Structure probing data (2A3 and DMS) for a 177-nucleotide construct. The DMS profile rests on 34,027 reads. Reactivities are given for positions 27 through 126.
RNA sequence: GGGAACGACUCGAGUAGAGUCGAAAAUGAUCGAGAGAUCUAACGAUGUACGCGAGUCAACAGCACAGACUCGAGCGAAAGCUCGGUCGAAAGACCGCGUACAUCGGUCGGCAAGUGUCCAGUCAAAAUCAUAUACGUCAUUCGUGACGUAUAUGAUAAAAGAAACAACAACAACAAC
Reactivity to 2A3 in 0.01 (KOAc 150mM, MgCl2 10mM, bicine 150mM(pH8.5), 24C), signal-to-noise 9, nucleotides 027 to 126: u080g000a000u010c010g000a000g010a000g000a110u010c000u020a080a020c010g000a000u000g000u010a000c000g020c010g030a070g050u050c020a030a060c040a120g240c060a060c020a100g010a000c040u080c220g000a000g000c010g050a130a010a000g000c000u000c000g000g000u000c010g010a020a010a000g000a000c000c000g000c000g000u000a000c000a000u000c000g000g000u040c040g020g010c060a140a120g070u040g040u120c020c020a020g060u080c050a060a070a030
Reactivity to DMS in 0.01 (KOAc 150mM, MgCl2 10mM, bicine 150mM(pH8.5), 24C), signal-to-noise 9, nucleotides 027 to 126: u010g010a010u000c010g010a260g000a240g010a010u000c000u010a080a110c010g010a010u000g010u000a000c000g010c000g010a070g020u000c000a070a100c150a130g020c190a080c220a140g000a010c000u010c010g010a010g000c000g000a120a070a150g010c000u000c000g000g010u000c000g000a080a070a140g000a010c000c000g010c010g010u000a000c010a000u000c000g000g010u000c080g010g010c090a070a090g010u010g000u000c010c030a100g000u010c110a060a090a090